Structure probing data (DMS and 2A3) for a 177-nucleotide construct. 2A3 adducts were read by reverse transcription with SuperScript II with manganese. For DMS, 10,043 sequencing reads were counted. DMS adducts were read by reverse transcription with MarathonRT.
[RMDB]
RNA sequence: GGGAACGACUCGAGUAGAGUCGAAAAUGUCAUCUAGCUAGCUAGUACUCAUGAUCCAUGAGUAGUACGCACUAGACGAUCCGCGUACAUCACAUGAUGCUCAUGUGUAGUACUAGCCAUGCGAUCCACGAUCUGUUUAUUUCGAUAAACAGAUCGUAAAAGAAACAACAACAACAAC
Reactivity to DMS in 0.01 (KOAc 150mM, MgCl2 10mM, bicine 150mM(pH8.5), 24C), signal-to-noise 8, nucleotides 027 to 126: u020g000u000c110a060u000c090u000a120g010c010u010a130g000c020u000a010g010u000a000c000u000c000a040u000g000a040u000c090c020a010u010g010a030g020u000a180g010u000a000c030g010c000a150c160u000a120g010a120c240g010a070u000c160c180g010c020g010u000a010c000a300u000c020a050c020a010u000g000a090u020g010c150u000c010a010u000g020u020g010u010a070g010u000a010c000u000a030g000c010c040a030u010g010c020g010a080u010c100c100
Reactivity to 2A3 in 0.01 (KOAc 150mM, MgCl2 10mM, bicine 150mM(pH8.5), 24C), signal-to-noise 7, nucleotides 027 to 126: u150g060u050c020a060u020c110u080a030g010c000u010a010g000c000u010a000g010u000a010c000u010c020a020u030g040a050u040c020c010a010u010g000a010g030u110a070g000u010a010c010g010c010a020c070u110a080g080a220c080g070a090u080c070c090g000c010g000u000a000c010a040u030c020a030c010a060u090g050a080u160g050c010u000c020a020u030g070u050g120u120a020g000u000a000c000u000a000g000c010c010a040u060g000c010g020a020u030c030c030